Structure probing data (DMS and 2A3) for a 177-nucleotide construct. The DMS profile rests on 8,599 reads. The 2A3 profile rests on 28,011 reads. For DMS the reverse transcriptase was MarathonRT.

[RMDB]
RNA sequence: GGGAACGACUCGAGUAGAGUCGAAAAGUGGCAUACUUCGGUAUGCCACAAACCAGACCCUUUCUGGAACACGCUCUACUGCGUGAUCCCAAGUAGAUCCCAAAAGUCGUGGGUUCGCCCACGACAACUGAAGAUGAUAGUUCGCUAUCAUCUUCAGAAAAGAAACAACAACAACAAC
Reactivity to DMS in 0.01 (KOAc 150mM, MgCl2 10mM, bicine 150mM(pH8.5), 24C), signal-to-noise 7, nucleotides 027 to 126: g020u000g000g010c000a010u000a000c000u000u020c170g030g010u000a000u000g000c000c000a000c000a010a040a100c030c030a040g000a090c300c130c100u000u000u010c020u000g000g000a150a260c020a010c020g000c000u010c090u000a060c060u000g000c030g000u000g010a070u000c030c010c040a050a040g000u000a030g000a190u000c010c010c010a080a100a120a130g010u000c000g030u000g010g010g030u000u010c210g020c000c000c000a000c000g010a000c010a020a080
Reactivity to 2A3 in 0.01 (KOAc 150mM, MgCl2 10mM, bicine 150mM(pH8.5), 24C), signal-to-noise 7, nucleotides 027 to 126: g000u000g000g000c010a010u010a000c010u030u050c190g060g000u000a000u000g010c010c010a000c000a000a000a000c010c000a010g040a010c060c010c030u040u270u020c030u030g000g020a060a020c020a000c030g010c000u040c030u100a080c060u080g050c000g010u010g080a050u030c000c010c000a020a020g010u030a020g030a100u040c030c020c000a030a110a040a050g000u000c000g000u000g010g010g020u010u040c240g050c000c000c000a000c000g000a000c000a000a010